[RMDB]
RNA sequence: GGGAACGACUCGAGUAGAGUCGAAAAGAUAUGGAUUCAGGGAGGUAUAGCUACCGGUCGGAAACGACCGAGUAGCUGCGAACCUGGUCCUAAGUCAAACCAUACCCACGUUCGCGUGGGUAUGGAAGAGACAAUUGCAGUUCGCUGCAAUUGUCUCAAAAGAAACAACAACAACAAC
Reactivity to 2A3 in 0.01 (KOAc 150mM, MgCl2 10mM, bicine 150mM(pH8.5), 24C), signal-to-noise 2, nucleotides 027 to 126: g010a000u040a020u040g040g010a020u300u290c000a000g020g040g080a070g010g220u300a300u290a300g000c000u020a000c000c000g020g030u000c000g000g000a060a030a000c010g000a010c000c010g000a020g000u010a010g000c010u020g020c040g020a010a030c000c000u010g000g030u010c010c010u000a040a000g050u010c050a030a050a030c020c010a010u000a000c000c000c000a010c000g010u090u090c160g000c000g170u000g000g010g000u000a000u000g000g000a010a020
Reactivity to DMS in 0.01 (KOAc 150mM, MgCl2 10mM, bicine 150mM(pH8.5), 24C), signal-to-noise 1, nucleotides 027 to 126: g000a030u010a100u000g000g000a050u000u000c010a030g000g000g000a110g010g010u000a130u010a030g000c000u000a000c000c000g000g010u000c010g000g000a040a050a090c010g020a010c000c000g020a060g020u000a000g040c000u000g040c080g010a100a260c000c000u000g010g000u010c000c000u000a000a100g000u010c020a130a100a120c000c000a000u000a000c000c000c000a000c000g020u010u000c230g010c010g050u000g000g010g000u000a000u000g000g000a020a030